[RMDB]
RNA sequence: GGGAACGACUCGAGUAGAGUCGAAAAGGUUAUACACCUUGGACCAAGCUAAGAUGCAUUGCGGAGCUUGUGGGUACGGUUGGGCUUAGUCGAAGCACAGUCAUGCAAGUGGCUAGUUGUAAUGCUAAGCGGUGAAACAGUUCGCUGUUUCACCGCUAAAAGAAACAACAACAACAAC
Reactivity to DMS in 0.01 (KOAc 150mM, MgCl2 10mM, bicine 150mM(pH8.5), 24C), signal-to-noise 3, nucleotides 027 to 126: g030g000u000u020a140u040a150c270a040c010c000u000u000g000g000a140c020c010a060a110g000c080u030a070a100g010a090u010g020c020a020u030u000g020c020g040g020a050g010c030u000u000g000u000g000g000g010u000a050c070g010g020u030u000g020g000g010c020u000u010a050g000u020c120g000a090a090g000c010a050c010a030g000u000c020a060u000g000c190a060a120g030u000g010g000c000u000a050g050u010u020g010u000a000a020u050g000c020u010a170

An RNA of 177 nucleotides, treated with DMS and read out base by base. The RNA was probed in 150 mM KOAc, 10 mM MgCl2 and 150 mM bicine (pH 8.5) at 24 C.